[RMDB]
RNA sequence: GGGAACGACUCGAGUAGAGUCGAAAACUUGUGGUGGCUUAAUCUUAAGUUUAGGUUUCACAAUAAAUAAGAAAAUUGGUACAAUUAUGUACAAUAUCAUAGGAACAAAGAAUGCAAGCCAAAACCCCCUAGGACCUAUAUUCGUAUAGGUCCUAGGAAAAGAAACAACAACAACAAC
Reactivity to 2A3 in 0.01 (KOAc 150mM, MgCl2 10mM, bicine 150mM(pH8.5), 24C), signal-to-noise 2, nucleotides 027 to 126: c020u060u090g020u070g120g030u020g050g000c000u020u010a040a060u010c030u180u100a270a130g020u010u030u120a100g000g070u040u140u110c030a020c020a030a080u180a280a050a000u140a090a010g090a040a090a050a040u030u070g070g010u010a000c000a080a100u250u140a130u300g000u010a010c000a030a000u050a010u150c060a060u030a200g090g000a030a030c040a040a100a110g020a050a020u080g030c050a010a000g000c020c000a000a030a140a190c010c040c010
Reactivity to DMS in 0.01 (KOAc 150mM, MgCl2 10mM, bicine 150mM(pH8.5), 24C), signal-to-noise 2, nucleotides 027 to 126: c090u000u010g000u010g000g050u010g030g030c000u010u000a060a030u000c080u000u000a110a200g020u040u000u000a050g010g010u000u000u000c070a130c070a060a080u030a080a020a050u010a050a190g000a040a050a150a120u000u000g000g020u030a010c040a090a130u000u010a060u000g030u010a000c000a040a050u010a130u010c090a050u000a080g010g000a060a060c130a040a090a090g020a100a080u030g010c070a010a060g050c010c040a070a050a070a110c010c050c040